[RMDB]
Chemical mapping of a 177-nucleotide RNA with DMS and 2A3.
2A3 adducts were read by reverse transcription with SuperScript II with manganese.
Source: RMDB library OK2TST, as collected in RNAgym.
RNA sequence: GGGAACGACUCGAGUAGAGUCGAAAAUGCCGCGCGUCAGUGACGUGGACCAGCUGAGCCUCACGCCAGUUGUGCCAGGGCCGCCCUGAUCUUGGCCUGCGCUUCGUCCAGCGAUCCCGGUGAGGGGCCCUCCUGAAGUCUUCGGACUUCAGGAGGGAAAAGAAACAACAACAACAAC
Reactivity to DMS in 0.01 (KOAc 150mM, MgCl2 10mM, bicine 150mM(pH8.5), 24C), signal-to-noise 1, nucleotides 027 to 126: u000g000c000c010g030c060g010c060g030u010c030a100g000u000g040a040c060g010u030g000g020a060c070c040a040g000c020u000g020a120g040c030c030u010c150a050c120g010c110c020a060g000u010u000g000u000g000c030c010a180g020g000g050c010c100g000c110c040c040u010g010a100u000c020u000u000g010g000c030c000u000g000c060g030c010u000u020c080g020u020c030c060a180g000c020g010a050u010c020c000c010g000g000u020g000a220g000g000g000g020
Reactivity to 2A3 in 0.01 (KOAc 150mM, MgCl2 10mM, bicine 150mM(pH8.5), 24C), signal-to-noise 1, nucleotides 027 to 126: u130g040c040c020g020c000g000c000g070u060c090a300g080u030g150a050c030g070u030g000g060a060c000c000a000g000c010u030g020a020g040c040c000u140c030a060c050g010c020c000a030g020u030u040g090u070g080c000c030a050g010g050g000c060c000g070c030c000c010u010g050a060u060c010u000u110g020g020c000c040u010g050c020g000c060u070u050c020g060u080c020c000a050g040c020g020a070u090c030c010c000g020g060u080g030a030g020g000g000g000